[RMDB]
RNA sequence: GGGAACGACUCGAGUAGAGUCGAAAAAGCUCAUUCGUGAGCUGCAUUUUCCUCUCUGCCCCAUAGGGUGUAGCUCUAACUACCCUCUAGGGAAGAGAAGGUUGGGGGGCAACAGUUUCGACUGUUGACCUUUCCCUAGAUUCGUCUAGGGAAAGGUAAAAGAAACAACAACAACAAC
Reactivity to DMS in 0.01 (KOAc 150mM, MgCl2 10mM, bicine 150mM(pH8.5), 24C), signal-to-noise 9, nucleotides 027 to 126: a020g010c000u000c000a040u000u010c180g030u000g010a010g010c000u000g010c210a100u000u000u000u000c000c000u000c010u000c000u000g010c120c010c000c100a100u000a020g010g000g010u000g010u000a010g010c070u010c230u020a150a170c010u000a020c000c030c000u000c030u000a050g000g000g010a300a010g000a010g000a050a050g010g010u000u000g010g000g010g000g010g010c000a000a010c000a010g010u000u000u010c210g010a040c000u000g000u000u000g000
Reactivity to 2A3 in 0.01 (KOAc 150mM, MgCl2 10mM, bicine 150mM(pH8.5), 24C), signal-to-noise 4, nucleotides 027 to 126: a000g000c000u010c010a020u070u070c180g100u020g020a000g000c010u010g000c010a030u090u050u050u060c010c000u020c010u000c000u020g130c040c000c000c000a100u020a000g000g000g010u010g000u000a000g010c020u050c050u300a070a050c000u000a000c010c020c000u010c010u000a010g010g010g000a010a000g010a000g030a100a030g110g000u160u150g000g000g000g020g000g000c000a000a000c000a010g000u020u050u120c100g060a020c010u010g000u010u000g000
The record gives the reactivity of an RNA of 177 nucleotides to DMS and 2A3. For DMS the reverse transcriptase was MarathonRT. 2A3 adducts were read by reverse transcription with SuperScript II with manganese. The DMS profile rests on 50,519 reads. The reactions ran in a buffer of 150 mM KOAc, 10 mM MgCl2 and 150 mM bicine (pH 8.5), at 24 C.